[RMDB]
RNA sequence: GGGAACGACUCGAGUAGAGUCGAAAAGACAGUUUUUGUACUUCAUCUGUCCAACUGCUUGUUAUCUCUGCUGCUAGAUUGCUAUAGAAAAUAACAUAUGUAUACUAGGUAGGAUGCAUUUAUGAUUUUUAGCUACUUGUUAAAUCAUAAGCUCAUACCAUAGGGGUAGUUUCGACUACCCCUAUGGAAAAGAAACAACAACAACAAC
Reactivity to 2A3 in 0.01 (KOAc 150mM, MgCl2 10mM, bicine 150mM(pH8.5), 24C), signal-to-noise 4, nucleotides 027 to 156: g010a000c020a020g010u020u030u050u150u150g090u150a100c050u090u100c030a100u040c040u080g000u000c010c010a050a040c050u040g040c040u120u050g030u110u070a130u030c050u000c010u040g040c020u030g030c010u030a040g030a210u010u090g000c020u040a030u040a150g110a080a160a060a070u140a080a010c030a040u120a020u160g030u060a060u040a150c040u020a030g090g000u010a030g020g040a030u040g010c020a040u090u030u020a010u030g010a020u020u090u020u040u040a000g010c020u040a070c080u180u140g010u040u050a010a020a010u010c000a000u000a000a010g000c010u030c130a050u100a070
Reactivity to DMS in 0.01 (KOAc 150mM, MgCl2 10mM, bicine 150mM(pH8.5), 24C), signal-to-noise 2, nucleotides 027 to 156: g010a050c040a060g010u000u000u000u000u000g000u000a060c090u000u000c080a110u010c050u010g010u000c040c060a100a080c050u000g010c040u010u020g010u000u000a060u000c030u010c020u020g020c010u010g010c040u010a100g010a180u000u010g030c000u000a130u000a120g000a060a050a070a080u000a080a080c030a090u000a040u000g020u000a060u010a070c020u000a080g030g020u000a110g020g000a080u010g010c020a050u000u000u010a020u000g010a050u010u000u000u000u000a070g000c040u000a090c120u000u000g010u000u000a030a040a040u000c010a060u000a020a040g000c070u000c000a110u000a180